[RMDB]
RNA sequence: GGGAACGACUCGAGUAGAGUCGAAAAGAUAUGGACGUGGAUCGAUAAGUCCCAGUCGGAAACGACUGAAGGACUUUUGACGAAUCACGUCCUAAGUCAAACGCGCCCCAGUUCGCUGGGGCGCGAAGUUAAUUGAUAUCUUCGGAUAUCAAUUAACAAAAGAAACAACAACAACAAC
Reactivity to 2A3 in 0.01 (KOAc 150mM, MgCl2 10mM, bicine 150mM(pH8.5), 24C), signal-to-noise 2, nucleotides 027 to 126: g000a010u030a010u070g010g000a000c010g010u010g020g030a030u010c000g060a130u080a300a060g010u010c000c010c000a000g010u020c000g020g000a050a020a010c000g000a000c010u030g050a090a070g000g010a010c000u090u100u080u300g160a030c020g000a030a030u020c000a000c000g000u000c000c000u000a000a000g000u000c000a040a040a080c010g000c020g030c000c060c000c010a020g020u060u090c210g050c170u000g000g010g000g000c000g000c010g000a020a000
Reactivity to DMS in 0.01 (KOAc 150mM, MgCl2 10mM, bicine 150mM(pH8.5), 24C), signal-to-noise 2, nucleotides 027 to 126: g000a010u000a180u000g000g010a020c010g040u000g000g010a030u000c010g020a180u010a050a040g000u000c000c000c010a020g010u010c000g010g000a060a050a110c010g010a000c000u000g000a140a130g010g000a030c000u000u000u000u010g020a190c010g000a040a030u000c010a010c000g000u000c000c010u010a010a050g010u000c020a050a120a220c020g000c000g020c000c000c010c030a010g030u000u030c210g030c000u000g020g000g000g010c000g000c000g000a000a030
This 177-nucleotide RNA was probed chemically with 2A3 and DMS. For 2A3 the reverse transcriptase was SuperScript II with manganese. Reactivities are rounded to 0.1 and cut off at 0 and 3. The DMS profile rests on 3,280 reads. The 2A3 profile rests on 6,694 reads. DMS adducts were read by reverse transcription with MarathonRT.